This 177-nucleotide RNA was probed chemically with DMS and 2A3. The reactions ran in a buffer of 150 mM KOAc, 10 mM MgCl2 and 150 mM bicine (pH 8.5), at 24 C. For 2A3 the reverse transcriptase was SuperScript II with manganese. Source: RMDB libraries RFM100 and RFMREP, as collected in RNAgym. For DMS the reverse transcriptase was MarathonRT.

[RMDB]
RNA sequence: GGGAACGACUCGAGUAGAGUCGAAAACCAUAAAAGAUGCCAGCUAGCAAUUGGGUGUAGCUACUUUAAUCGAUCAUUCAUUCAGUCGCUUCCCGGGAAACCAAAGCUUUUGGGCUCCGGGGGAAGAAUAUAGAUUCUACUUCGGUAGAAUCUAUAUAAAAGAAACAACAACAACAAC
Reactivity to DMS in 0.01 (KOAc 150mM, MgCl2 10mM, bicine 150mM(pH8.5), 24C), signal-to-noise 5, nucleotides 027 to 126: c020c000a120u060a080a080a090a150g010a070u010g010c050c070a050g010c040u010a060g000c040a090a100u010u000g010g020g020u000g010u020a070g010c030u010a040c070u020u010u020a090a110u010c040g010a050u020c040a100u010u020c050a060u000u010c070a060g020u000c040g000c110u000u000c000c000c000g030g000g010a030a040a130c000c010a000a020a180g010c190u020u010u000u000g010g010g010c130u000c020c020g020g040g020g000g000a030a030g000a130
Reactivity to 2A3 in 0.01 (KOAc 150mM, MgCl2 10mM, bicine 150mM(pH8.5), 24C), signal-to-noise 8, nucleotides 027 to 126: c000c000a020u190a040a120a010a040g100a020u100g060c020c020a010g020c050u050a010g010c030a090a190u150u150g060g030g000u070g040u050a020g020c020u020a040c020u080u110u140a070a090u070c050g060a040u060c040a060u130u060c020a030u070u020c030a030g080u050c030g040c090u040u080c000c000c010g000g000g020a080a050a010c010c010a030a020a040g300c040u140u100u050u030g010g010g010c030u010c020c010g080g000g010g000g010a010a040g020a050